[RMDB]
RNA sequence: GGGAACGACUCGAGUAGAGUCGAAAAAUUGGGUCAAAUAAUUCAGGCGAUGUGCUCGUGCAGUGCGCUGGUCCCAGCGUGGGGAAGGCUUGCUGCGACAGCCUCUCCUCCUGUCCCUGUACCCUCGAAAUACCAGUCACUUCGGUGACUGGUAUUUAAAAGAAACAACAACAACAAC
Reactivity to DMS in 0.01 (KOAc 150mM, MgCl2 10mM, bicine 150mM(pH8.5), 24C), signal-to-noise 3, nucleotides 027 to 126: a090u000u000g000g000g040u000c050a090a070a090u020a070a130u010u000c080a040g020g020c300g010a030u000g000u010g010c010u000c110g010u000g000c030a030g040u000g010c300g020c000u000g000g020u010c020c000c000a230g020c220g020u020g010g010g010g010a100a240g000g000c000u000u000g030c030u010g000c010g010a050c150a030g000c000c000u010c060u010c040c010u010c070c070u000g010u000c010c010c000u000g000u010a070c020c010c010u000c230g000
Reactivity to 2A3 in 0.01 (KOAc 150mM, MgCl2 10mM, bicine 150mM(pH8.5), 24C), signal-to-noise 2, nucleotides 027 to 126: a010u110u100g040g000g020u030c020a100a040a070u210a120a130u270u160c040a020g010g010c030g020a040u060g190u220g000c050u010c060g080u140g000c050a020g000u030g020c020g000c030u050g180g070u210c020c020c010a030g210c130g240u260g010g000g040g020a070a020g040g000c020u000u040g020c050u030g000c030g070a040c000a010g000c010c000u000c020u000c000c030u040c040c020u040g020u040c040c000c010u000g040u050a080c000c020c040u020c100g060